[RMDB]
An RNA of 177 nucleotides, treated with DMS and 2A3 and read out base by base. For DMS the reverse transcriptase was MarathonRT. For 2A3 the reverse transcriptase was SuperScript II with manganese. Conditions: 150 mM KOAc, 10 mM MgCl2 and 150 mM bicine (pH 8.5), 24 C. For DMS, 585 sequencing reads were counted.
RNA sequence: GGGAACGACUCGAGUAGAGUCGAAAACUAGGAUCGUUCGCGAUCCUAGAAAGGCGCGGCACCGUCCGCGGAACAAACCGCAAAACAAGAAAGUCAGCAUAAAAAUCAUCAGCUUCGGCUGAUGAAACGUAUCGAUUUCGUUCGCGAAAUCGAUACGAAAAGAAACAACAACAACAAC
Reactivity to DMS in 0.01 (KOAc 150mM, MgCl2 10mM, bicine 150mM(pH8.5), 24C), signal-to-noise 1, nucleotides 027 to 126: c000u000a000g000g010a000u000c000g000u010u000c190g050c030g000a010u000c000c020u000a030g010a040a130a150g000g030c000g000c010g000g050c030a240c180c100g010u020c000c040g000c000g040g030a140a160c220a030a120a120c050c030g000c060a130a020a110a050c130a040a070g010a070a000a030g010u040c040a070g040c070a080u000a040a090a050a030a100u000c010a000u000c010a000g000c000u000u000c130g000g000c000u000g040a010u010g000a000a070a110
Reactivity to 2A3 in 0.01 (KOAc 150mM, MgCl2 10mM, bicine 150mM(pH8.5), 24C), signal-to-noise 2, nucleotides 027 to 126: c000u000a000g000g010a020u000c000g030u050u030c150g040c000g060a000u060c010c000u000a000g000a000a020a000g110g010c020g010c030g010g000c010a080c210c090g170u130c000c010g000c000g000g000a020a020c050a030a080a020c010c000g000c020a010a060a100a160c030a120a080g070a070a160a000g130u140c090a030g090c140a160u170a120a150a030a020a020u000c000a010u000c000a000g010c010u110u090c180g130g010c000u000g020a000u010g000a010a020a010